Chemical mapping of a 177-nucleotide RNA with DMS and 2A3. It was measured as part of the RMDB library OK1LIB. Conditions: 150 mM KOAc, 10 mM MgCl2 and 150 mM bicine (pH 8.5), 24 C. Values cover nucleotides 27 to 126.
RNA sequence: GGGAACGACUCGAGUAGAGUCGAAAAUCAAUCAGAUAUCCUUGCCAUUGCGCUUGGAAAUACGAACUCGCUUGUCGGUCUCCUCGUCUACCCGGUAGCCGAUGCGGGUGGGCUUGCCGUCUGAGUCGCCAUAGCGUACGUUCGCGUACGCUAUGGCAAAAGAAACAACAACAACAAC
Reactivity to DMS in 0.01 (KOAc 150mM, MgCl2 10mM, bicine 150mM(pH8.5), 24C), signal-to-noise 1, nucleotides 027 to 126: u110c070a140a150u040c180a110g000a220u040a120u000c000c000u000u040g000c030c000a100u070u050g030c130g000c000u000u040g060g000a050a110a050u080a100c020g000a090a010c050u040c000g000c050u070u000g000u000c000g000g000u000c000u000c030c040u000c000g000u000c000u000a100c070c000c020g000g000u000a160g000c060c060g000a010u090g000c000g000g020g040u020g000g000g000c010u000u000g000c070c070g030u010c120u120g000a030g040u000c120
Reactivity to 2A3 in 0.01 (KOAc 150mM, MgCl2 10mM, bicine 150mM(pH8.5), 24C), signal-to-noise 3, nucleotides 027 to 126: u080c060a000a030u110c020a020g050a050u100a020u080c010c000u020u030g000c000c010a300u110u300g010c220g000c070u000u050g000g070a010a090a060u090a050c020g020a040a030c030u000c020g000c010u020u060g010u000c000g000g010u040c020u000c020c000u040c020g000u000c020u020a020c000c000c000g100g020u100a050g070c130c050g060a060u100g100c020g010g020g000u060g000g000g000c000u010u040g000c030c060g090u040c060u130g060a090g160u060c080